[RMDB]
RNA sequence: GGGAACGACUCGAGUAGAGUCGAAAAGCCCUCGUCGAGGCGACCGGCGGCGACCGUUGCGUGGACCGCUUCCUGCUCGUCGGGGGGGGGGAGCCACUGUGGUCCUCCGGGACGUUUUCUGGAUGGCGCCCAUGCACGCUUUCGAGCGUGCAUGGGCAAAAGAAACAACAACAACAAC
Reactivity to 2A3 in 0.01 (KOAc 150mM, MgCl2 10mM, bicine 150mM(pH8.5), 24C), signal-to-noise 1, nucleotides 027 to 126: g040c000c130c030u000c000g160u030c130g010a000g000g030c000g000a000c000c000g020g060c220g040g020c130g010a010c010c000g130u150u190g030c000g040u050g000g000a050c000c000g150c080u010u000c020c000u080g030c040u080c140g250u240c030g000g100g000g000g000g000g000g000g000g010a110g270c020c000a000c000u140g080u160g140g030u000c000c000u030c000c000g000g100g010a220c000g000u000u000u210u160c030u060g230g000a160u010g000g030c090